[RMDB]
RNA sequence: GGGAACGACUCGAGUAGAGUCGAAAAGGGUCGGGUUGACGGUGGUCGCCGACGAUAACCUGGCGGCGCUGCAGGCCCGGUCAGCGCGCAUCCCCUUGCAAGAGACCGCGCAGGUCGCGGCGCGCCGCGUUUAUCGUAGCUUCGGCUACGAUAAACGAAAAGAAACAACAACAACAAC
Reactivity to 2A3 in 0.01 (KOAc 150mM, MgCl2 10mM, bicine 150mM(pH8.5), 24C), signal-to-noise 2, nucleotides 027 to 126: g110g000g000u020c020g030g030g060u060u160g050a070c050g040g120u180g140g050u030c020g000c030c000g010a040c020g040a130u100a110a080c020c050u020g030g000c000g030g020c000g000c000u040g000c050a050g070g010c000c000c000g000g000u010c010a000g010c020g000c000g000c030a090u040c030c000c010c000u040u130g050c070a090a010g010a010g020a090c010c020g000c020g010c070a040g090g010u100c010g000c010g030g000c000g000c000g010c000c020g040
Reactivity to DMS in 0.01 (KOAc 150mM, MgCl2 10mM, bicine 150mM(pH8.5), 24C), signal-to-noise 4, nucleotides 027 to 126: g000g000g010u000c010g010g010g010u000u010g020a150c040g030g010u000g030g030u000c020g020c020c010g010a020c100g010a140u010a060a130c140c060u000g000g000c000g020g020c000g020c010u000g000c150a110g000g010c020c040c010g010g000u000c030a070g030c020g010c050g000c090a120u000c040c020c030c050u000u010g010c170a180a180g010a080g010a060c300c000g030c100g010c050a100g000g020u000c030g010c050g020g000c000g000c000g020c000c130g010